[RMDB]
RNA sequence: GGGAACGACUCGAGUAGAGUCGAAAAUGCUGGAAGCCUUGAUCCCGGCGGUCAUCGAGCAGCGGGUACCCGGCGCCGACGCGUUUCGGUCGUGGCGGCUGUUGGUGUCCAAGUACGGAACGCAGGCGCCUUCGUGGGCAUUCGUGCCCACGAAGGCAAAAGAAACAACAACAACAAC
Reactivity to 2A3 in 0.01 (KOAc 150mM, MgCl2 10mM, bicine 150mM(pH8.5), 24C), signal-to-noise 3, nucleotides 027 to 126: u200g010c030u040g030g040a070a020g000c000c000u060u050g060a130u100c000c020c000g030g010c010g000g020u070c020a060u050c040g060a010g050c010a000g010c040g050g010g020u080a080c030c010c000g020g020c030g000c010c020g000a020c040g030c010g040u020u090u130c060g050g000u060c040g010u080g070g060c040g060g020c060u060g070u130u150g080g050u080g040u050c000c010a020a000g040u060a070c030g000g010a080a000c020g000c050a020g010g010c010
Reactivity to DMS in 0.01 (KOAc 150mM, MgCl2 10mM, bicine 150mM(pH8.5), 24C), signal-to-noise 1, nucleotides 027 to 126: u010g030c000u000g000g000a090a110g000c040c070u000u020g000a110u010c030c010c130g000g020c080g000g010u030c040a060u020c020g010a150g020c020a050g020c110g000g000g040u000a090c010c040c000g040g000c000g000c010c020g000a100c170g000c020g020u010u000u030c040g000g010u020c060g020u020g000g000c010g000g000c070u020g000u000u030g010g020u010g000u020c000c000a060a150g000u030a150c020g010g000a010a010c000g060c000a060g000g030c040